[RMDB]
RNA sequence: GGGAACGACUCGAGUAGAGUCGAAAAAGACGUAAAUUAAAUUUCCCUUGCUGAGCUCAUCUGAGCAAACAAUAACAAAUAACAAAUAAGAACAGCAGGGAAGAAAGUUCUUAUUUGAAUAAAUAAACCAUGUAGCUAUGUUCGCAUAGCUACAUGGAAAAGAAACAACAACAACAAC
Reactivity to 2A3 in 0.01 (KOAc 150mM, MgCl2 10mM, bicine 150mM(pH8.5), 24C), signal-to-noise 1, nucleotides 027 to 126: a010g080a020c090g040u100a020a080a130u090u130a040a060a100u000u180u060c000c000c000u000u070g000c050u080g010a010g020c010u010c030a170u110c190u160g010a000g010c000a060a060a000c020a000a060u150a050a040c050a050a090a060u160a070a040c000a000a030a010u020a020a000g020a030a000c000a010g110c020a030g040g090g040a030a030g050a010a070a010g010u010u000c000u000u020a010u020u010u000g040a080a030u160a170a070a010u080a000a040a010